[RMDB]
RNA sequence: GGGAACGACUCGAGUAGAGUCGAAAAGAAGGGAAAGGAGAGCCAUGGACAGUCUCCAGAGGUUCCUAAGGCCUCGAUCGCGCCUGCAGGGAGGCAGAAUGUCCCGGUUGUCCAUGGAAGAAGAAGAGCAGUGAUGAUUAUUCGUAAUCAUCACUGCAAAAGAAACAACAACAACAAC
Reactivity to 2A3 in 0.01 (KOAc 150mM, MgCl2 10mM, bicine 150mM(pH8.5), 24C), signal-to-noise 4, nucleotides 027 to 126: g060a030a040g060g010g040a060a090a060g070g030a050g030a010g060c000c010a010u030g000g000a000c000a010g050u030c010u020c050c020a010g030a020g030g040u080u120c030c010u040a050a040g070g000c000c020u020c030g020a110u140c050g010c030g030c030c040u040g000c040a050g030g050g010a020g030g000c010a030g070a070a040u100g030u040c000c000c010g000g000u040u030g000u000c000c000a010u010g020g000a030a030g050a020a000g050a030a000g020a020
Reactivity to DMS in 0.01 (KOAc 150mM, MgCl2 10mM, bicine 150mM(pH8.5), 24C), signal-to-noise 7, nucleotides 027 to 126: g010a110a070g010g000g010a030a050a070g010g010a100g010a220g040c020c010a010u000g000g000a020c010a080g010u010c020u020c040c050a110g020a050g010g020u000u000c050c120u050a100a100g010g000c000c010u000c040g010a120u040c080g020c130g030c060c030u020g010c060a110g000g010g000a020g020g020c030a110g010a050a060u020g010u000c000c000c020g000g000u040u010g000u010c000c000a010u000g000g030a150a080g010a110a090g010a130a080g000a210